[RMDB]
RNA sequence: GGGAACGACUCGAGUAGAGUCGAAAAACUGCCAUACGUGGCAGAAACACGCCUUACCUGGACUAAACAGCGUGUCUAAAAAACAGUCCUUCAUACCUGAUCUGGAGGGUAGAUCAGGAAUACUAAAAAAAUCGGGUGAAGUUCGCUUCACCCGAAACUAAAUGAGAAUGUUCGCAUUCUCAUUUAGAAAAGAAACAACAACAACAAC
Reactivity to 2A3 in 0.01 (KOAc 150mM, MgCl2 10mM, bicine 150mM(pH8.5), 24C), signal-to-noise 6, nucleotides 027 to 156: a000c000u000g010c000c000a020u040a070c180g090u040g000g000c000a000g010a010a010a000c000a000c000g000c000c000u040u070a030c020c070u040g000g010a010c010u060a120a040a020c020a020g000c000g000u000g020u040c120u060a010a020a010a010a000a000c040a010g000u000c010c000u040u100c080a090u090a140c000c000u010g000a000u010c000u020g080g050a060g070g060g050u070a010g010a000u010c020a000g020g000a000a010u100a040c070u150a000a010a050a040a000a040a140u020c000g000g010g000u000g000a000a000g020u040u120c170g040c100u000u000c000a000c000c000c000g000a000a000a000
Reactivity to DMS in 0.01 (KOAc 150mM, MgCl2 10mM, bicine 150mM(pH8.5), 24C), signal-to-noise 2, nucleotides 027 to 156: a090c010u010g020c010c000a100u000a080c180g020u000g010g000c000a010g000a160a110a050c000a000c000g000c000c000u010u010a060c070c060u000g010g030a090c000u000a080a040a070c030a040g010c000g040u000g030u000c120u010a000a020a050a130a020a070c080a080g000u000c010c010u000u010c130a150u010a140c000c000u000g010a020u000c000u030g070g000a070g000g010g020u010a060g000a030u000c000a010g020g010a060a030u000a120c090u020a000a040a070a070a050a110a120u000c000g000g000g040u000g000a030a040g020u000u000c290g040c000u000u000c000a020c000c000c000g000a000a000a010